[RMDB]
RNA sequence: GGGAACGACUCGAGUAGAGUCGAAAAAUCUAAUUCUGCAUAGUGGUUUAAUUAUGUAGUCUCGCUUUUGGACCAGAACAAUCACCAUCCUUUAUUAUCCUUGUGCUUGUGACAAUAUCAGUCUAAUCAAGCAUUACGACUUCGGUCGUAAUGCUUGAAAAGAAACAACAACAACAAC
Reactivity to 2A3 in 0.01 (KOAc 150mM, MgCl2 10mM, bicine 150mM(pH8.5), 24C), signal-to-noise 1, nucleotides 027 to 126: a000u040c050u070a050a000u040u040c000u000g000c010a020u000a010g000u060g000g300u000u090u230a200a020u060u040a120u130g000u010a040g010u000c000u040c040g010c060u020u000u120u220g000g020a050c110c100a040g060a000a180c040a000a100u080c000a010c080c000a000u100c000c000u260u060u000a080u000u100a080u010c000c000u030u040g090u010g060c000u100u000g000u000g040a000c060a060a070u050a040u140c000a060g040u020c000u000a050a050u070
Notes
Conditions: 150 mM KOAc, 10 mM MgCl2 and 150 mM bicine (pH 8.5), 24 C. Structure probing data (2A3) for a 177-nucleotide construct. It was measured as part of the RMDB library RFM100. For 2A3, 364 sequencing reads were counted.